Conditions: 150 mM KOAc, 10 mM MgCl2 and 150 mM bicine (pH 8.5), 24 C. This 207-nucleotide RNA was probed chemically with 2A3. Values cover nucleotides 27 to 156. For 2A3 the reverse transcriptase was SuperScript II with manganese. The 2A3 profile rests on 379 reads.
RNA sequence: GGGAACGACUCGAGUAGAGUCGAAAAGUGUCAAUUCCUCAAUCUCUUAUGAAGUGGAAGCACAAUCAAUUGGUCGUAUUUUCGGCCUAGAACACGAAUUAAUUAACGAAGGCGACACGAUCAAAAUUAAAGAUACAGGGUUUACACCAGAAUUAUACCGUACCUAAGGGUUCGCCCUUAGGUACGGAAAAGAAACAACAACAACAAC
Reactivity to 2A3 in 0.01 (KOAc 150mM, MgCl2 10mM, bicine 150mM(pH8.5), 24C), signal-to-noise 1, nucleotides 027 to 156: g000u000g070u070c000a030a020u060u280c000c010u030c000a080a080u020c040u000c000u180u240a200u250g150a070a000g030u010g050g050a090a110g050c040a110c000a000a090u150c110a030a060u070u000g000g000u010c010g000u010a270u080u050u000u010c050g180g010c000c000u000a110g030a160a050c000a000c200g000a000a090u090u160a040a120u060u190a100a130c030g040a120a000g000g040c010g010a000c000a000c080g000a050u050c050a000a020a000a110u050u230a000a030a000g020a000u000a030c080a050g000g000g100u010u060u030a040c020a000c010c000a000g130a030a050u130u140a110u190a110